[RMDB]
RNA sequence: GGGAACGACUCGAGUAGAGUCGAAAAGAUAUGGAUAUCGAGGGUACCAGCUUUGAUCUCGGAAACGAGGGAGCUGUGUACCUCCCCACCGAUAUCCUAAGUCAACGGGAAGACUUCGGUCUUCCAACACUAAGCUAAUCUUCGGAUUAGCUUAGUGAAAAGAAACAACAACAACAAC
Reactivity to 2A3 in 0.01 (KOAc 150mM, MgCl2 10mM, bicine 150mM(pH8.5), 24C), signal-to-noise 5, nucleotides 027 to 126: g030a010u140a060u230g000g000a000u000a000u010c000g000a030g020g000g000u010a010c000c010a000g020c020u280u290u100g100a130u090c010u000c000g010g050a110a100a060c000g000a000g000g000g010a000g000c010u010g090u090g010u180a010c000c010u010c000c000c000c000a010c010c000g000a000u000a000u000c000c000u020a160a050g100u070c040a080a090c170g150g000g000a010a000g000a000c000u050u130c300g040g000u000c000u000u010c000c010a000a000
Reactivity to DMS in 0.01 (KOAc 150mM, MgCl2 10mM, bicine 150mM(pH8.5), 24C), signal-to-noise 7, nucleotides 027 to 126: g000a060u000a300u010g010g010a020u000a000u000c000g010a190g000g000g010u000a000c000c000a020g010c000u000u000u020g010a050u010c000u000c010g000g000a120a110a150c020g010a030g000g000g000a010g020c000u000g000u010g020u000a000c000c010u000c040c020c010c020a300c080c010g000a010u000a010u000c000c010u000a050a110g000u000c060a090a130c210g000g000g010a010a000g000a010c000u000u010c190g030g000u000c000u010u000c000c000a080a100
Structure probing data (2A3 and DMS) for a 177-nucleotide construct. DMS adducts were read by reverse transcription with MarathonRT. It was measured as part of the RMDB library TTRDEL. The RNA was probed in 150 mM KOAc, 10 mM MgCl2 and 150 mM bicine (pH 8.5) at 24 C. Values cover nucleotides 27 to 126.